[RMDB]
RNA sequence: GGGAACGACUCGAGUAGAGUCGAAAAGAUAUGGAGCAAUCAUAUUGUCAGCUCCGUAAUCGGAAACGAUUAUUGAGCUUGGAUUUAUAUGGUUUACUCCUAAGUCAAACCCACGUUCGCGUGGGAACAAAUGGCAUAAGUUCGCUUAUGCCAUUUGAAAAGAAACAACAACAACAAC
Reactivity to DMS in 0.01 (KOAc 150mM, MgCl2 10mM, bicine 150mM(pH8.5), 24C), signal-to-noise 7, nucleotides 027 to 126: g010a020u000a300u010g000g000a000g030c300a020a000u000c000a010u000a010u000u000g000u000c010a030g000c000u000c010c060g010u000a000a000u000c000g000g000a140a080a180c010g010a010u000u000a010u000u000g000a020g010c000u000u010g010g010a020u010u010u000a000u000a000u010g000g010u000u000u010a090c010u000c000c000u000a030a140g000u000c030a080a110a160c000c010c000a010c010g010u000u010c190g040c010g020u000g000g000g010a050a090
Reactivity to 2A3 in 0.01 (KOAc 150mM, MgCl2 10mM, bicine 150mM(pH8.5), 24C), signal-to-noise 5, nucleotides 027 to 126: g030a000u070a050u120g010g000a000g000c050a000a000u010c000a010u000a000u020u020g020u030c000a010g000c000u000c000c000g000u010a000a000u000c000g010g020a050a050a030c010g010a000u000u010a010u010u010g000a000g010c030u130u170g150g010a070u230u300u060a020u020a000u010g010g010u010u070u100a110c010u020c000c010u000a150a000g020u010c040a040a030a250c000c010c000a010c010g020u050u070c300g000c010g110u020g000g000g020a010a020